[RMDB]
RNA sequence: GGGAACGACUCGAGUAGAGUCGAAAAGAAAGCGUUAUUCGGCGAAAGAAGCGUACGAAACGCAAAGAAAAACGUGCGCGUAGGAAUGCGCGACCGACAAGAAACGCCGAGAAAUCGUGCAUGAAAAACGUAAUGGUCAUUUCGAUGACCAUUACGUAAAAGAAACAACAACAACAAC
Reactivity to DMS in 0.01 (KOAc 150mM, MgCl2 10mM, bicine 150mM(pH8.5), 24C), signal-to-noise 2, nucleotides 027 to 126: g010a080a050a240g020c010g010u000u000a080u030u000c020g000g020c000g000a020a060a120g000a150a180g040c000g000u000a100c180g000a020a020a020c020g000c010a080a030a200g010a090a090a030a070a040c040g010u010g010c000g030c000g000u000a020g010g150a090a130u000g020c000g040c000g010a020c060c000g000a090c150a240a070g000a060a060a100c070g020c010c020g000a020g000a060a100a070u000c000g010u000g000c030a120u060g020a060a010a060a100
Reactivity to 2A3 in 0.01 (KOAc 150mM, MgCl2 10mM, bicine 150mM(pH8.5), 24C), signal-to-noise 2, nucleotides 027 to 126: g070a010a030a000g010c020g000u060u050a090u130u030c000g010g000c030g050a010a080a090g090a090a030g070c000g030u060a070c030g080a070a160a000c020g000c030a000a170a000g100a020a040a000a040a000c020g020u060g020c000g010c000g000u020a050g020g130a130a080u130g000c010g010c000g010a070c000c040g010a050c000a030a010g100a070a020a000c040g000c000c000g000a000g000a020a050a000u070c020g020u030g040c020a060u090g090a020a070a070a000
This 177-nucleotide RNA was probed chemically with DMS and 2A3. It was measured as part of the RMDB library OK1LIB. The DMS profile rests on 2,836 reads.